This 207-nucleotide RNA was probed chemically with 2A3. The reactions ran in a buffer of 150 mM KOAc, 10 mM MgCl2 and 150 mM bicine (pH 8.5), at 24 C. As a SHAPE reagent, 2A3 marks flexible, mostly unpaired nucleotides at the ribose 2'-OH.

[RMDB]
RNA sequence: GGGAACGACUCGAGUAGAGUCGAAAAGUCUAAGAGUCGGGGAAGAGUUGGGGAUUCAGAGGAACCUGACCCCAAGGAGGAGAAAGAAGAGCAAGAGAGGAGGAAGCUCGGAGAUGAAUACAAGAAAUUGCUGAUAAGAAAGGAAGAGAUUGAGGACGACUCUCUAAAUCUUCGGAUUUAGAGAGUCAAAAGAAACAACAACAACAAC
Reactivity to 2A3 in 0.01 (KOAc 150mM, MgCl2 10mM, bicine 150mM(pH8.5), 24C), signal-to-noise 1, nucleotides 027 to 156: g000u020c010u130a100a030g060a040g020u060c070g000g000g000g000a000a070g010a020g050u060u050g020g030g010g000a050u140u120c010a030g060a110g010g080a040a050c000c000u000g050a010c000c000c000c020a000a010g030g010a010g010g040a030g000a000a060a000g040a000a010g000a000g010c030a040a020g030a010g010a050g020g000a010g020g000a040a050g040c040u110c160g040g000a060g010a020u060g030a080a060u110a120c040a120a090g060a040a130a060u040u080g000c010u010g020a070u040a140a080g070a130a020a010g000g010a020a020g040a020g010a050u040u090g010a040g030g010a040c020